[RMDB]
RNA sequence: GGGAACGACUCGAGUAGAGUCGAAAAGUUACUGUCGAGUACAACAUUCAUGCUGUAUUAGACACACUACUUGCUUCUUCUAGUCUUAGAACCUUUGUUGUAGAUAAGUCUUUGUCAAUUGAGGAGUACGCGCCAACGUUCGCGUUGGCGAAAAGAAACAACAACAACAAC
Reactivity to 2A3 in 0.01 (KOAc 150mM, MgCl2 10mM, bicine 150mM(pH8.5), 24C), signal-to-noise 3, nucleotides 027 to 129: g020u020u030a080c060u030g000u040c030g010a020g000u010a010c020a060a020c010a040u010u230c100a120u230g000c020u000g010u010a000u000u000a100g000a000c000a000c070a000c000u060a070c040u060u090g000c000u010u000c000u030u030c020u040a020g100u010c000u070u070a050g000a070a040c000c080u000u000u000g140u090u140g020u110a060g030a210u050a070a050g020u000c000u010u060u060g200u130c080a080a120u060u060g050a040g020g000a000g000u050a040c030g000
Reactivity to DMS in 0.01 (KOAc 150mM, MgCl2 10mM, bicine 150mM(pH8.5), 24C), signal-to-noise 4, nucleotides 027 to 129: g000u030u030a080c160u030g020u010c040g000a150g050u030a000c020a040a040c030a160u010u080c270a070u060g050c050u020g000u000a020u030u030a180g030a020c030a030c180a120c040u040a090c040u040u000g020c100u000u000c030u020u040c050u030a100g010u020c090u000u000a070g030a210a110c060c020u000u020u060g020u020u000g000u020a070g050a060u000a000a120g060u010c060u040u030u020g020u000c000a020a080u030u160g030a050g030g000a040g020u030a080c050g040